Chemical mapping of a 177-nucleotide RNA with DMS and 2A3. The RNA was probed in 150 mM KOAc, 10 mM MgCl2 and 150 mM bicine (pH 8.5) at 24 C.
[RMDB]
RNA sequence: GGGAACGACUCGAGUAGAGUCGAAAAGAGUCGUUAGUUCACUUGGUGUAGCUGCCGCGGCGUCGAUGGUUUUUUUCACAUGGUUCGGAGUUUGAAUGUCCUUGACAACAGCAAGGACAAACAACGCCCUUCGUCAACAGUUCGCUGUUGACGAAGGAAAAGAAACAACAACAACAAC
Reactivity to DMS in 0.01 (KOAc 150mM, MgCl2 10mM, bicine 150mM(pH8.5), 24C), signal-to-noise 2, nucleotides 027 to 126: g040a130g020u000c000g040u000u000a070g000u000u010c010a080c030u020u000g000g000u000g030u010a150g010c040u000g020c060c050g070c060g040g000c010g030u020c050g000a080u040g040g000u000u000u000u010u000u000u000c110a020c080a080u010g000g020u050u030c000g000g010a140g020u020u000u000g060a020a220u000g000u000c000c000u000u000g000a130c070a080a030c300a120g000c000a000a000g030g000a000c000a010a000a150c000a020a010c200g050c100
Reactivity to 2A3 in 0.01 (KOAc 150mM, MgCl2 10mM, bicine 150mM(pH8.5), 24C), signal-to-noise 2, nucleotides 027 to 126: g070a000g000u000c000g000u050u000a010g030u000u050c010a040c080u050u140g070g000u090g070u100a030g000c080u050g030c010c000g030c060g030g000c010g050u030c010g020a010u050g030g030u060u020u000u000u000u100u070c080a100c020a060u110g060g000u000u030c020g020g050a070g070u000u050u040g020a070a050u010g020u000c010c000u050u010g070a140c120a300a080c060a160g100c010a020a000g000g000a010c000a050a000a000c030a000a030c040g010c010
Reactivities are given for positions 27 through 126.